The record gives the reactivity of an RNA of 207 nucleotides to 2A3 and DMS.
DMS (dimethyl sulfate) methylates the pairing face of unpaired adenines and cytosines.
The 2A3 profile rests on 1,916 reads.
It was measured as part of the RMDB library M2RFPK.
The RNA was probed in 150 mM KOAc, 10 mM MgCl2 and 150 mM bicine (pH 8.5) at 24 C.
Reactivities are rounded to 0.1 and cut off at 0 and 3.
[RMDB]
RNA sequence: GGGAACGACUCGAGUAGAGUCGAAAAAGUUAGGUUCGCUAUGGUGCAACUCUUUAAGGCAAUAACGAACUAUUUCUAAGCAAGUAAUGGAGAAAUGCCAGGGUCACUAUCUAGCCAUAAUAGUGCUGUAAGUGACUUAGAUUCGUCUAAGUCACAACAAUCGAAGGUGGUUCGCCACCUUCGAUUGAAAAGAAACAACAACAACAAC
Reactivity to 2A3 in 0.01 (KOAc 150mM, MgCl2 10mM, bicine 150mM(pH8.5), 24C), signal-to-noise 3, nucleotides 027 to 156: a000g130u110u090a040g000g060u030u010c030g010c060u020a010u060g070g070u050g040c040a090a090c020u040c040u080u190u130a110a070g030g000c030a110a100u070a080a060c060g010a000a010c000u010a070u000u050u010c030u050a100a050g040c050a060a020g040u140a040a100u050g030g000a040g050a080a110a020u080g020c040c050a010g010g000g030u040c000a000c020u010a030u140c010u030a020g020c000c000a030u020a100a020u040a130g130u050g060c070u030g010u100a160a070g020u000g000a000c000u000u000a000g000a000u020u020c060g010u000c160u000a000a000g020u000c000a000c000a000a010
Reactivity to DMS in 0.01 (KOAc 150mM, MgCl2 10mM, bicine 150mM(pH8.5), 24C), signal-to-noise 2, nucleotides 027 to 156: a070g020u000u000a060g000g020u000u000c030g040c030u000a030u010g020g070u000g020c020a100a090c090u000c050u010u000u000a040a120g040g000c020a090a050u000a060a060c070g000a040a040c010u000a090u010u010u000c040u000a070a150g000c060a030a100g010u000a030a050u010g000g010a060g000a030a110a110u000g000c020c020a130g020g000g010u000c020a010c030u000a060u010c030u000a050g010c000c050a080u000a030a080u000a080g020u010g050c020u010g010u010a060a100g020u000g040a020c010u000u000a000g010a070u010u010c300g020u000c000u000a000a000g010u000c010a000c020a020a110